The record gives the reactivity of an RNA of 207 nucleotides to DMS and 2A3. The reactions ran in a buffer of 150 mM KOAc, 10 mM MgCl2 and 150 mM bicine (pH 8.5), at 24 C.
RNA sequence: GGGAACGACUCGAGUAGAGUCGAAAAGAGCGAUUAGACAAAGGGGUAGAGCUACAUAUUAGAUAGCUGUAUAAUCGUUCAAGUUACAUCAAAACAUCUGCAAUAUUUAUUACUUACUUUCCUUUCUGCCAGAGUACGGUAUUCGUACCGUACUCAAGAUAAGAAUUCACUUCGGUGAAUUCUUAUCAAAAGAAACAACAACAACAAC
Reactivity to DMS in 0.01 (KOAc 150mM, MgCl2 10mM, bicine 150mM(pH8.5), 24C), signal-to-noise 2, nucleotides 027 to 156: g000a030g030c020g000a060u000u000a010g010a050c000a060a110a080g020g000g040g050u000a100g010a040g050c010u000a030c030a160u010a170u000u010a190g000a300u000a030g020c020u000g030u010a030u000a020a030u000c030g010u000u000c020a100a140g030u000u000a100c040a120u010c090a030a080a110a090c020a030u000c080u000g000c040a040a090u010a110u000u000u000a040u020u010a040c050u000u000a050c050u000u000u000c000c020u030u010u020c010u000g070c070c080a120g000a050g010u000a010c010g030g010u010a040u000u000c300g040u010a030c000c000g040u000a000c010u010c000a010a100
Reactivity to 2A3 in 0.01 (KOAc 150mM, MgCl2 10mM, bicine 150mM(pH8.5), 24C), signal-to-noise 6, nucleotides 027 to 156: g010a000g000c000g000a010u000u020a020g030a070c060a040a120a050g070g030g010g030u050a030g020a000g050c010u030a010c030a070u280a190u200u130a100g190a300u010a010g010c000u000g010u030a050u010a010a000u010c000g000u010u010c010a030a000g020u050u090a060c040a090u100c050a100a090a090a060c020a070u090c080u150g050c050a060a070u070a140u180u200u070a110u140u080a070c020u060u030a060c010u040u080u090c010c010u020u070u060c040u050g060c040c040a040g000a000g010u000a000c000g000g000u000a020u020u050c090g030u010a000c000c000g000u000a000c000u000c000a000a000